[RMDB]
RNA sequence: GGGAACGACUCGAGUAGAGUCGAAAAGCACGUCGUUACGACGACGUGCAAGAAAACAAAAGGAGUAGUGAUGUCUGACUACAAUGAAUCAAACGGACAAAAAGCAUGGUGGUACGCCACCAUGCAACCAGCACGUCGCGUUCGCGCGACGUGCUGGAAAAGAAACAACAACAACAAC
Reactivity to 2A3 in 0.01 (KOAc 150mM, MgCl2 10mM, bicine 150mM(pH8.5), 24C), signal-to-noise 2, nucleotides 027 to 126: g000c000a000c000g080u050c000g000u000u010a140c300g020a020c000g000a000c000g110u000g000c000a000a000g000a000a100a000a030c170a000a000a080a020g160g100a180g040u030a000g000u000g130a240u110g100u000c000u000g000a010c000u000a000c050a050a150u200g040a090a080u090c000a050a050a040c010g070g000a000c020a000a140a000a000a000g000c000a000u000g000g000u030g010g000u000a020c250g120c020c000a000c000c000a000u000g000c000a000a000

Chemical mapping of a 177-nucleotide RNA with 2A3. Reactivities are given for positions 27 through 126. The reactions ran in a buffer of 150 mM KOAc, 10 mM MgCl2 and 150 mM bicine (pH 8.5), at 24 C.